The record gives the reactivity of an RNA of 177 nucleotides to DMS and 2A3. Conditions: 150 mM KOAc, 10 mM MgCl2 and 150 mM bicine (pH 8.5), 24 C. Reactivities are rounded to 0.1 and cut off at 0 and 3. It was measured as part of the RMDB library OK2TRN.
RNA sequence: GGGAACGACUCGAGUAGAGUCGAAAAAGUGAAACCAGCCCUAGCCUUUGGAAGCUCUUGAAGGUUCAGCACCCACCCAGGAAUCCACCUGCCUGUUACACGCCUCUCCAAGACACAGUGGCACCGCGAGUGCCAUAGAGUUCGCUCUAUGGCACUCAAAAGAAACAACAACAACAAC
Reactivity to DMS in 0.01 (KOAc 150mM, MgCl2 10mM, bicine 150mM(pH8.5), 24C), signal-to-noise 3, nucleotides 027 to 126: a120g020u010g010a080a060a110c070c030a110g000c030c020c020u000a130g000c020c010u000u010u010g010g000a140a130g000c060u000c020u000u010g010a060a050g000g020u000u030c070a060g020c070a070c040c020c030a080c030c050c030a100g000g000a090a110u000c040c020a070c050c010u000g030c040c030u000g000u000u000a100c070a070c090g000c020c030u000c060u000c020c060a040a080g010a070c080a040c080a070g030u000g000g000c040a070c040c070g030c180
Reactivity to 2A3 in 0.01 (KOAc 150mM, MgCl2 10mM, bicine 150mM(pH8.5), 24C), signal-to-noise 1, nucleotides 027 to 126: a000g090u050g040a100a030a010c050c010a020g020c000c020c000u000a040g020c000c050u050u060u040g050g010a110a010g060c020u050c000u130u090g050a140a050g020g000u090u080c030a010g040c020a040c010c020c010a010c010c020c000a000g030g060a070a030u070c010c000a050c080c030u000g070c010c010u020g010u090u080a040c060a000c070g020c000c000u000c000u000c040c000a050a020g050a000c000a000c000a140g010u060g000g050c010a000c040c000g000c000
DMS adducts were read by reverse transcription with MarathonRT.
For 2A3, 1,375 sequencing reads were counted.
Reactivities are given for positions 27 through 126.